[RMDB]
RNA sequence: GGGAACGACUCGAGUAGAGUCGAAAAGCUAUGGUGCAACUCUUUAAGGCAAUAAGGAACUAAUUCUAAGCAAGUAAUGGAGAAAUGCCAGGGUCACUAUCUAGCCAUAAUAGUGCUUGACAGUAUGAGAAUCUGCUACCCUUCGGGGUAGCAGAAACAACUAGUAAACCUUCGGGUUUACUAGUUGAAAAGAAACAACAACAACAAC
Reactivity to 2A3 in 0.01 (KOAc 150mM, MgCl2 10mM, bicine 150mM(pH8.5), 24C), signal-to-noise 2, nucleotides 027 to 156: g040c030u050a030u070g020g030u050g000c020a010a130c030u030c000u090u190u190a110a060g010g000c040a040a160u130a080a060g030g020a020a020c040u040a080a080u100u050c040u060a090a030g090c090a060a050g030u110a050a090u160g050g020a050g020a050a120a020u040g030c020c010a040g010g010g000u020c000a010c040u030a030u070c020u040a000g010c010c000a020u100a180a090u070a180g090u030g030c010u030u040g060a030c020a080g070u080a080u130g060a080g010a110a040u010c000u000g000c000u000a000c000c000c000u000u040c190g010g000g000g000u000a000g000c000a000g000a000a010a000
Reactivity to DMS in 0.01 (KOAc 150mM, MgCl2 10mM, bicine 150mM(pH8.5), 24C), signal-to-noise 2, nucleotides 027 to 156: g010c010u000a030u010g010g030u000g030c030a100a090c010u000c010u000u000u010a120a100g020g040c040a050a130u000a080a140g000g000a100a160c040u000a060a100u010u010c040u000a070a150g010c060a070a130g000u000a040a110u000g020g000a100g010a090a080a060u000g000c000c020a100g000g020g030u000c030a020c010u000a060u000c050u000a090g030c060c070a100u000a050a090u000a060g010u000g000c010u000u000g000a110c000a040g010u010a080u000g000a120g000a090a090u000c000u000g000c000u000a020c010c000c000u000u000c270g080g040g000g020u000a000g000c000a000g020a000a030a070
This 207-nucleotide RNA was probed chemically with 2A3 and DMS. Conditions: 150 mM KOAc, 10 mM MgCl2 and 150 mM bicine (pH 8.5), 24 C. DMS adducts were read by reverse transcription with MarathonRT. The DMS profile rests on 3,225 reads. For 2A3 the reverse transcriptase was SuperScript II with manganese. It was measured as part of the RMDB library M2RFPK.